[RMDB]
RNA sequence: GGGAACGACUCGAGUAGAGUCGAAAAGACUACCAGUUCGCUGGUAGUCAAACGGAAACGGGAAGGCGGCGGCGUCCGCCGUAACAAACGCAAAAAGAAAAAAAAGACGAAGCUUCGGCUUCGUCAACAUUAGGCAAAGCUUCGGCUUUGCCUAAUGAAAAGAAACAACAACAACAAC
Reactivity to 2A3 in 0.01 (KOAc 150mM, MgCl2 10mM, bicine 150mM(pH8.5), 24C), signal-to-noise 1, nucleotides 027 to 126: g000a000c000u000a010c020c000a000g000u030u050c200g060c070u010g010g000u010a010g000u000c000a000a000a020c010g020g010a100a000a010c000g030g000g060a110a000g000g010c010g000g060c060g030g020c000g100u200c000c020g010c020c000g010u000a000a000c000a000a010a000c010g040c040a010a010a080a040a100g180a060a070a010a020a000a000a000a010g000a000c000g000a000a000g000c000u050u130c250g020g000c000u000u000c020g030u010c000a000a000
Reactivity to DMS in 0.01 (KOAc 150mM, MgCl2 10mM, bicine 150mM(pH8.5), 24C), signal-to-noise 1, nucleotides 027 to 126: g020a030c000u010a010c000c000a020g020u000u000c210g030c000u010g000g000u000a020g010u010c010a000a090a120c030g000g020a080a030a070c040g050g000g020a120a210g000g000c000g010g000c010g010g000c030g000u010c000c000g030c000c000g010u000a000a170c100a030a070a000c020g030c000a060a080a050a120a110g030a000a010a020a110a040a070a230a110g000a020c000g000a020a010g000c000u010u010c200g020g020c010u000u000c000g000u010c010a000a080
The record gives the reactivity of an RNA of 177 nucleotides to 2A3 and DMS.
For DMS the reverse transcriptase was MarathonRT.
The data come from the RNA Mapping Database (RMDB), library M2PK50.
2A3 adducts were read by reverse transcription with SuperScript II with manganese.
The reactions ran in a buffer of 150 mM KOAc, 10 mM MgCl2 and 150 mM bicine (pH 8.5), at 24 C.
For DMS, 1,018 sequencing reads were counted.